[RMDB]
RNA sequence: GGGAACGACUCGAGUAGAGUCGAAAAUUAGGAUCACAGCUCACAAAAAAUCCCCAAAGCUCAAUAACUGAAGCGAAGGAACUUUUUAAUGACCAGGGUUGGUGACUCCCGUGGCCGAGAAGCACUAUGUAAGAAAUGGUUUCGACCAUUUCUUACAAAAAGAAACAACAACAACAAC
Reactivity to 2A3 in 0.01 (KOAc 150mM, MgCl2 10mM, bicine 150mM(pH8.5), 24C), signal-to-noise 1, nucleotides 027 to 126: u100u040a050g040g040a000u070c000a000c000a040g030c020u030c050a060c150a010a160a030a010a090a020u060c000c030c050c010a100a060a000g040c010u050c000a000a130u140a300a080c050u060g070a130a000g000c010g020a040a050g010g000a010a010c000u000u070u040u090u170a160a110u120g040a020c020c040a030g020g000g030u040u070g010g060u040g000a040c070u040c090c020c000g050u040g030g000c000c010g060a030g020a050a000g030c010a040c050u060a040
Reactivity to DMS in 0.01 (KOAc 150mM, MgCl2 10mM, bicine 150mM(pH8.5), 24C), signal-to-noise 3, nucleotides 027 to 126: u010u000a130g030g000a060u000c010a050c060a050g010c040u010c040a080c090a010a020a060a070a050a060u000c030c010c010c070a040a080a230g010c030u010c030a030a160u010a090a100c180u000g010a070a050g020c020g000a130a150g000g010a060a040c050u000u000u010u010u000a060a100u000g020a080c080c080a060g000g000g010u000u000g000g020u000g010a070c110u010c020c030c030g020u000g020g000c020c000g010a060g000a070a060g000c060a050c100u000a090